[RMDB]
The data come from the RNA Mapping Database (RMDB), library OK2TRN. An RNA of 177 nucleotides, treated with 2A3 and DMS and read out base by base. For DMS, 1,013 sequencing reads were counted. DMS (dimethyl sulfate) methylates the pairing face of unpaired adenines and cytosines. The reactions ran in a buffer of 150 mM KOAc, 10 mM MgCl2 and 150 mM bicine (pH 8.5), at 24 C. For 2A3 the reverse transcriptase was SuperScript II with manganese.
RNA sequence: GGGAACGACUCGAGUAGAGUCGAAAACUAGAUCUUAUAUAGAUAGUACUGAUUUACCAAUUCAAAUAUACCCUAGAUAUAAACUUCCUAUAGAAUUAGCAGGUAUGAUUCCUUAUUAUUCAGCAGAACACCAUAUGAUGUUCGCAUCAUAUGGUGUAAAAGAAACAACAACAACAAC
Reactivity to 2A3 in 0.01 (KOAc 150mM, MgCl2 10mM, bicine 150mM(pH8.5), 24C), signal-to-noise 1, nucleotides 027 to 126: c000u010a000g010a000u050c010u190u100a070u010a020u060a300g020a040u070a030g020u000a050c010u000g000a110u090u110u120a040c020c030a010a050u040u060c030a070a070a010u050a040u070a090c000c000c000u000a000g010a000u110a020u050a120a120a000c010u030u080c030c000u070a060u090a200g090a100a070u060u070a080g000c020a000g000g020u070a070u110g130a020u170u000c000c000u000u010a020u020u030a060u060u150c030a050g010c020a030g070a150
Reactivity to DMS in 0.01 (KOAc 150mM, MgCl2 10mM, bicine 150mM(pH8.5), 24C), signal-to-noise 2, nucleotides 027 to 126: c020u030a090g000a130u040c020u000u010a030u010a160u000a200g000a040u000a040g010u000a080c110u000g010a110u000u000u000a080c090c050a040a100u000u020c050a050a080a130u000a040u010a040c040c050c020u000a120g020a110u000a070u010a020a080a080c100u000u000c030c040u010a080u000a150g000a090a070u000u000a030g040c110a020g030g020u000a030u020g000a100u000u010c010c020u020u000a030u000u000a050u010u000c040a090g030c240a090g010a100